RNA sequence: GGGAACGACUCGAGUAGAGUCGAAAAUCCUCAGGGUUCGCCCUGAGGAAAACGCACAACUCAUGGAGCGCACGACGGAUCACCAUCGAUUCGACAUGAGAAAAAGAACUUGCUUCGGCAAGUUCAACUAUUAUCCGGGGUUCGCCCCGGAUAAUAGAAAAGAAACAACAACAACAAC
Reactivity to DMS in 0.01 (KOAc 150mM, MgCl2 10mM, bicine 150mM(pH8.5), 24C), signal-to-noise 1, nucleotides 027 to 126: u010c000c000u030c000a000g010g000g000u000u030c260g040c000c010c010u020g000a030g030g000a020a020a010a070c190g030c090a170c150a060a040c020u020c030a010u000g000g000a150g060c030g050c130a070c070g010a020c100g010g000a110u000c230a070c090c080a000u000c020g010a080u000u000c000g020a300c020a010u010g000a050g010a100a110a080a140a110g010a000a000c000u000u000g010c000u000u000c270g000g000c000a010a000g000u000u000c000a070a050